[RMDB]
RNA sequence: GGGAACGACUCGAGUAGAGUCGAAAAUUGGUUACACCAAGGAGGGUAGUGUGAUCAAUUUCUGUUACAUGCAUCAAAUGGAACUUGCUAAUGGUACACAUACCGGUUCAGCAUUUGAUGGUACUAUGCUAAGUCUGUAGUUCGCUACAGACUUAGCAAAAGAAACAACAACAACAAC
Reactivity to 2A3 in 0.01 (KOAc 150mM, MgCl2 10mM, bicine 150mM(pH8.5), 24C), signal-to-noise 3, nucleotides 027 to 126: u000u000g000g000u010u010a000c020a010c020c030a100a050g120g020a050g030g070g030u100a050g010u010g000u000g000a020u000c000a000a000u010u010u040c040u030g120u020u090a080c040a100u130g100c000a010u000c000a000a000a000u010g030g000a000a010c000u010u080g050c010u170a180a050u060g020g070u170a080c180a010c020a150u060a010c010c000g000g010u010u020c020a120g000c010a070u010u000u010g010a000u000g010g000u020a090c050u040a030u040
Reactivity to DMS in 0.01 (KOAc 150mM, MgCl2 10mM, bicine 150mM(pH8.5), 24C), signal-to-noise 1, nucleotides 027 to 126: u030u000g000g000u000u000a020c000a020c000c040a100a150g020g000a120g000g030g010u010a070g000u000g020u000g030a000u000c000a010a020u000u000u000c060u010g010u000u010a110c120a040u000g020c020a000u000c010a000a040a000u000g030g010a040a000c030u000u040g030c130u000a050a080u000g010g000u000a030c300a180c090a050u010a040c160c080g000g010u000u000c020a080g020c030a000u000u000u000g000a030u010g000g000u000a020c130u000a050u010
Source information: Source: RMDB library 15KREP, as collected in RNAgym. This 177-nucleotide RNA was probed chemically with 2A3 and DMS. For DMS, 876 sequencing reads were counted. As a SHAPE reagent, 2A3 marks flexible, mostly unpaired nucleotides at the ribose 2'-OH. For 2A3 the reverse transcriptase was SuperScript II with manganese. Conditions: 150 mM KOAc, 10 mM MgCl2 and 150 mM bicine (pH 8.5), 24 C. DMS adducts were read by reverse transcription with MarathonRT.